[RMDB]
RNA sequence: GGGAACGACUCGAGUAGAGUCGAAAAUUUAAGAGCGUAGAUGUCUCUGUCACGAUACGAGUAAGUGACUCUCGUGUACUACUGACGAAUGAGACAGUGACAUUUAUGCUCAGUGUCAGUCAAGGAAGUACGGUCGAUAAUUCGUUAUCGACCGUACAAAAGAAACAACAACAACAAC
Reactivity to DMS in 0.01 (KOAc 150mM, MgCl2 10mM, bicine 150mM(pH8.5), 24C), signal-to-noise 3, nucleotides 027 to 126: u000u010u020a100a140g010a010g010c010g060u000a010g010a020u000g000u010c000u000c000u010g010u000c020a060c070g010a070u010a060c040g010a070g020u000a030a070g010u000g000a070c090u000c180u000c150g000u000g000u000a020c060u000a070c030u000g020a150c040g000a100a090u010g010a090g010a010c000a000g020u000g000a010c000a000u000u000u000a000u000g000c010u000c000a040g000u010g000u010c100a110g020u000c100a040a090g010g010a110a140
Reactivity to 2A3 in 0.01 (KOAc 150mM, MgCl2 10mM, bicine 150mM(pH8.5), 24C), signal-to-noise 3, nucleotides 027 to 126: u130u130u100a210a020g000a000g000c020g000u000a000g010a010u020g000u000c010u000c010u030g020u000c010a010c110g040a010u040a060c000g010a020g010u080a200a120g050u060g210a030c010u020c010u010c100g060u110g020u050a070c040u000a010c020u030g160a090c040g090a080a050u110g010a050g000a080c010a000g000u010g000a000c000a000u000u010u000a010u020g000c000u010c000a000g010u000g040u050c040a020g010u000c050a030a100g110g050a140a040
An RNA of 177 nucleotides, treated with DMS and 2A3 and read out base by base. The reactions ran in a buffer of 150 mM KOAc, 10 mM MgCl2 and 150 mM bicine (pH 8.5), at 24 C. Source: RMDB library M2PK90, as collected in RNAgym.